[RMDB]
RNA sequence: GGGAACGACUCGAGUAGAGUCGAAAAGAUAUGGAAUAACGUAAGUGAUUCGUGAAUUUCGCGAAACGUAAGUGUCGGAAACGACACUACGGAGAAAUCACGAAUCACUUACGUUAUUCCUAAGUCAGACAUUGAUCUAGUUCGCUAGAUCAAUGUCAAAAGAAACAACAACAACAAC
Reactivity to DMS in 0.01 (KOAc 150mM, MgCl2 10mM, bicine 150mM(pH8.5), 24C), signal-to-noise 3, nucleotides 027 to 126: g000a080u000a300u010g000g000a020a020u000a010a010c000g010u000a020a000g020u000g000a010u000u010c010g020u000g000a060a080u000u000u000c000g020c290g000a140a100a210c000g010u020a030a110g020u000g000u000c000g000g000a200a120a180c000g000a010c000a000c000u010a000c000g000g000a090g020a010a000a010u010c010a000c000g010a010a000u000c000a020c000u010u000a000c000g010u000u010a000u000u010c000c000u020a020a060g000u010c070a210